This 207-nucleotide RNA was probed chemically with 2A3.

RNA sequence: GGGAACGACUCGAGUAGAGUCGAAAACCAUUCCUUGUACCUUGAGUAUUGCUGAAUUCAGUUUAGCGUGCAUGCUCUUGGCUAUUCUCAUAGUGAUUGUCAAAUUUGGAGUUACUUAUUCGUCAAUAAAACACUACCACGUUCGCGUGGUAGUGAACGGUCAAUCAAGGUUCGCCUUGAUUGACCGAAAAGAAACAACAACAACAAC
Reactivity to 2A3 in 0.01 (KOAc 150mM, MgCl2 10mM, bicine 150mM(pH8.5), 24C), signal-to-noise 1, nucleotides 027 to 156: c010c000a000u010u050c040c000u000u060g090u070a070c000c000u000u050g000a000g010u040a090u180u060g050c000u080g060a170a070u140u090c070a070g050u020u060u070a060g040c160g000u090g070c040a030u090g010c000u060c000u000u000g000g010c000u000a000u090u070c130u060c120a110u110a120g050u090g090a230u000u100g110u100c120a010a130a110u210u080u160g130g020a070g080u090u060a090c030u010u180a070u250u080c110g080u010c070a120a060u080a040a030a020a060c040a000c000u000a000c000c000a000c000g000u000u030c020g030c000g020u000g000g000u000a000g000u000g000a000a000
The 2A3 profile rests on 440 reads. The RNA was probed in 150 mM KOAc, 10 mM MgCl2 and 150 mM bicine (pH 8.5) at 24 C. It was measured as part of the RMDB library M2RFPK. Reactivities are given for positions 27 through 156.